RNA sequence: GGGAACGACUCGAGUAGAGUCGAAAAUGAUGACACUAGCGCGGGAUAUGUCCACAAUCGCAAGAACAUUCUUAAGUGGGUUGAAGUUACAAGUGUUAGGGGCAGGCAUUCGGCUGUGUUUGAGCGACAGUUACGCGUCAUUCGUGACGCGUAACUGAAAAGAAACAACAACAACAAC
Reactivity to DMS in 0.01 (KOAc 150mM, MgCl2 10mM, bicine 150mM(pH8.5), 24C), signal-to-noise 1, nucleotides 027 to 126: u000g010a190u000g000a050c040a030c100u000a050g010c020g020c100g010g000g000a070u000a070u010g000u010c020c040a090c070a100a120u030c060g000c120a120a130g010a060a100c140a150u010u000c010u000u010a070a110g000u020g040g000g000u000u010g000a080a150g000u020u030a090c030a030a100g040u030g040u000u010a020g000g010g030g040c040a030g030g010c060a120u000u000c020g000g010c040u000g010u000g000u020u000u000g010a140g030c110g040a100

An RNA of 177 nucleotides, treated with DMS and read out base by base. The reactions ran in a buffer of 150 mM KOAc, 10 mM MgCl2 and 150 mM bicine (pH 8.5), at 24 C. The data come from the RNA Mapping Database (RMDB), library OK2TST. Reactivities are given for positions 27 through 126.